Source: RMDB library TTRDEL, as collected in RNAgym. This 177-nucleotide RNA was probed chemically with 2A3 and DMS. For 2A3, 4,046 sequencing reads were counted. The RNA was probed in 150 mM KOAc, 10 mM MgCl2 and 150 mM bicine (pH 8.5) at 24 C.
RNA sequence: GGGAACGACUCGAGUAGAGUCGAAAAGAUAUGGAGAACACGUAGCGCGCAAUGUACAUCGGAAACGAUGUAUGACGAACUACGCUACUGUUCUCCUAAGUCAAAGAAACUCGUUCGCGAGUUUCAAGCUGUUAGGUAACUUCGGUUACCUAACAGCAAAAGAAACAACAACAACAAC
Reactivity to 2A3 in 0.01 (KOAc 150mM, MgCl2 10mM, bicine 150mM(pH8.5), 24C), signal-to-noise 3, nucleotides 027 to 126: g010a030u060a020u090g020g000a020g000a010a010c030a010c220g000u010a000g000c080g000c020g040c230a030a040u210g000u020a010c000a000u010c000g020g030a050a040a010c020g020a000u000g000u000a010u010g110a020c020g070a150a090c180u300a140c300g010c000u000a000c000u010g000u000u000c000u000c000c010u000a020a000g000u000c010a050a010a090g020a000a000a000c020u020c030g020u100u080c300g030c030g100a020g000u010u010u000c000a030a020
Reactivity to DMS in 0.01 (KOAc 150mM, MgCl2 10mM, bicine 150mM(pH8.5), 24C), signal-to-noise 2, nucleotides 027 to 126: g000a020u010a300u010g020g010a020g010a000a000c000a010c290g020u000a000g040c000g020c180g000c090a100a100u000g010u000a000c010a010u000c000g020g010a110a060a130c010g010a010u000g000u000a020u010g010a100c250g010a030a180c150u010a050c030g040c000u000a010c010u010g000u020u000c000u000c000c010u000a000a060g000u000c010a070a100a130g000a020a000a020c000u000c000g020u010u000c230g000c000g040a000g020u000u000u000c000a050a050